[RMDB]
RNA sequence: GGGAACGACUCGAGUAGAGUCGAAAAGGCCUUGCUCUGCCCUCAGCGGAACUUAAGUCUGCUGAUGUUAACGUGUUUGCAAUUGGAGUUGAGGAUGCAGAUGAAGGAGCGUUAAAAGAAAUAGCAAGUGAACCGCUCAAUAUGCAUAUGUUCAACCCGGUAUUGACACUUUCGAGUGUCAAUACCGAAAAGAAACAACAACAACAAC
Reactivity to 2A3 in 0.01 (KOAc 150mM, MgCl2 10mM, bicine 150mM(pH8.5), 24C), signal-to-noise 1, nucleotides 027 to 156: g050g030c000c000u000u000g000c000u020c010u070g060c000c010c000u000c000a010g030c000g050g040a060a060c080u250u170a280a010g130u040c020u000g000c000u020g000a060u140g090u000u070a100a050c070g070u050g020u030u060u170g050c060a110a090u030u200g120g000a160g160u020u020g000a020g030g030a000u010g000c010a030g010a120u130g050a060a010g070g010a020g000c010g020u090u160a060a140a000a050g140a010a080a100u090a060g100c040a000a010g040u110g090a010a020c040c000g000c020u040c000a050a010u100a050u100g010c040a000u080a020u270g170u070u000c000a000a000c000c000